[RMDB]
RNA sequence: GGGAACGACUCGAGUAGAGUCGAAAAGCUGCGUCAAACCUCGCUGUUUUCUUGGCUAACUUUCAGCGAGGUGAGGCAAGGCGGCAAAAAAAAGUUGGGAGCAGCAACGGCAAGCAAAAAAAAAGUUACAAGUUGCGAUGGUUCGCCAUCGCAACAACUCCACUUACCAGUUCGCUGGUAAGUGGAGAAAAGAAACAACAACAACAAC
Reactivity to 2A3 in 0.01 (KOAc 150mM, MgCl2 10mM, bicine 150mM(pH8.5), 24C), signal-to-noise 1, nucleotides 027 to 156: g000c000u010g000c020g030u030c050a040a040a020c000c000u000c000g000c000u000g020u000u010u000u030c070u190u150g140g000c080u020a030a020c020u000u010u030c000a000g010c000g000a010g000g000u000g000a000g000g000c030a000a050g060g000c020g000g000c090a030a050a080a030a000a000a010a050g100u100u090g000g020g000a060g010c000a010g000c000a020a010c010g070g000c020a010a060g010c020a040a020a020a000a000a010a000a000a010g000u000u010a010c020a090a100g000u000u000g010c000g010a000u000g000g000u020u030c110g070c060c000a010u000c000g000c000a000a000c000a000a000
Annotation:
Chemical mapping of a 207-nucleotide RNA with 2A3. Source: RMDB library M2RFPK, as collected in RNAgym. Conditions: 150 mM KOAc, 10 mM MgCl2 and 150 mM bicine (pH 8.5), 24 C. 2A3 adducts were read by reverse transcription with SuperScript II with manganese.